This 177-nucleotide RNA was probed chemically with DMS and 2A3. For 2A3 the reverse transcriptase was SuperScript II with manganese. The reactions ran in a buffer of 150 mM KOAc, 10 mM MgCl2 and 150 mM bicine (pH 8.5), at 24 C. DMS adducts were read by reverse transcription with MarathonRT.

RNA sequence: GGGAACGACUCGAGUAGAGUCGAAAAUAGAGACGAUGAAGGACGUGAUAAGCUGCGAUAAGUUACGGUAAGCUGCUAUAUGCUUUGACCCGUAAAUUUCCGAAUGGGGCAACCCGGCUAUGUGAAGUUCAAAUGACCAUUUCGAUGGUCAUUUGAAAAAAGAAACAACAACAACAAC
Reactivity to DMS in 0.01 (KOAc 150mM, MgCl2 10mM, bicine 150mM(pH8.5), 24C), signal-to-noise 7, nucleotides 027 to 126: u030a050g000a090g000a070c110g010a090u010g010a170a080g020g000a040c030g010u000g000a090u010a100a130g000c020u010g000c050g010a050u010a020a060g010u000u000a020c030g010g000u000a060a050g010c010u000g010c070u060a080u010a050u030g020c020u000u000u010g000a110c300c000c020g010u000a020a010a070u000u000u000c030c020g010a100a090u040g000g020g000g000c110a070a080c040c010c020g010g000c110u000a040u010g000u010g000a070a070g010
Reactivity to 2A3 in 0.01 (KOAc 150mM, MgCl2 10mM, bicine 150mM(pH8.5), 24C), signal-to-noise 5, nucleotides 027 to 126: u200a010g080a000g010a020c070g030a050u080g080a060a040g030g000a000c020g010u020g020a060u040a190a040g010c000u040g010c020g050a030u020a130a030g040u030u020a010c020g010g020u030a030a010g030c000u010g000c010u050a040u040a020u300g010c010u140u150u080g070a030c000c000c000g000u010a000a010a040u040u040u000c000c010g030a030a070u140g000g000g010g000c010a010a060c020c000c000g010g000c040u070a060u090g120u050g080a090a080g040